[RMDB]
RNA sequence: GGGAACGACUCGAGUAGAGUCGAAAAACAGGUGAGCUGGUCGAAGGUUGCCUGGUCGGGGGCGAAACCUGAGAUGACGAUUGUACUCGACCUAAGCCUGUAGACGCUUCGUGUGGAACAUUCUCGGACGCGGGUUCGAUUCCCGCCGCCUCCACCACCUUUAAUCAGAGUUCGCUCUGAUUAAAGGAAAAGAAACAACAACAACAAC
Reactivity to DMS in 0.01 (KOAc 150mM, MgCl2 10mM, bicine 150mM(pH8.5), 24C), signal-to-noise 2, nucleotides 027 to 156: a070c010a030g040g020u000g010a190g030c050u000g030g020u000c020g030a140a190g000g010u010u000g020c010c050u020g020g040u000c050g010g000g030g060g020c010g000a070a030a070c050c010u000g000a080g010a120u010g010a130c020g020a120u000u040g040u000a050c040u000c020g030a030c020c020u010a080a300g020c020c000u010g040u010a110g010a140c130g020c110u000u000c050g030u000g010u000g050g030a070a070c050a130u000u010c000u000c020g030g010a090c100g000c020g020g050g010u000u010c130g010a300u010u010c010c000c010g040c000c040g030c000c000u010c010c010a060c010c020a160
Reactivity to 2A3 in 0.01 (KOAc 150mM, MgCl2 10mM, bicine 150mM(pH8.5), 24C), signal-to-noise 6, nucleotides 027 to 156: a000c010a000g030g000u070g040a070g110c120u060g040g000u010c010g020a070a030g070g020u040u020g040c020c030u040g010g020u050c140g010g020g000g000g000c020g030a120a010a020c020c020u050g000a000g010a030u060g050a040c080g060a080u050u140g050u110a060c020u010c010g000a000c000c000u010a040a010g000c000c010u030g020u070a060g070a110c070g040c100u130u130c140g090u100g020u130g100g040a070a050c010a060u150u070c020u010c010g030g010a040c030g000c000g000g000g000u050u090c040g030a030u060u070c000c010c000g010c010c000g000c000c000u000c000c000a000c000c000a020